RNA sequence: GGGAACGACUCGAGUAGAGUCGAAAAUGUGCCAUCGUACUGCACUAUGGGCACUGAUGCAGUGUGGAACGACACUCGCAACACUUACGAAGCAUGCGGUGUAACACCAUGGCUAACAACCGCAUGGCGAUUUUGGGACUUUCGAGUCCCAAAAUCGAAAAGAAACAACAACAACAAC
Reactivity to DMS in 0.01 (KOAc 150mM, MgCl2 10mM, bicine 150mM(pH8.5), 24C), signal-to-noise 2, nucleotides 027 to 126: u000g000u000g000c000c000a100u000c130g060u000a010c150u000g000c110a070c170u000a040u000g000g000g000c040a000c010u000g020a180u030g000c000a020g010u000g010u000g030g000a250a160c170g000a100c000a000c000u010c220g010c000a020a070c140a040c120u000u060a120c120g070a070a140g000c060a000u000g000c010g000g000u000g020u000a030a140c100a180c110c120a060u000g010g000c100u000a080a040c090a130a080c020c010g070c000a000u000g030g030
Reactivity to 2A3 in 0.01 (KOAc 150mM, MgCl2 10mM, bicine 150mM(pH8.5), 24C), signal-to-noise 3, nucleotides 027 to 126: u090g010u000g000c010c000a040u040c020g040u140a060c040u230g160c170a010c060u040a050u140g060g010g030c020a020c040u070g040a060u110g000c020a000g000u020g000u050g060g300a120a040c070g040a000c010a010c000u060c060g000c000a000a070c000a010c100u140u250a130c130g020a000a000g030c000a020u020g000c030g000g060u050g010u050a120a040c050a020c100c110a060u120g130g000c090u030a050a070c100a050a050c000c000g000c020a010u010g000g000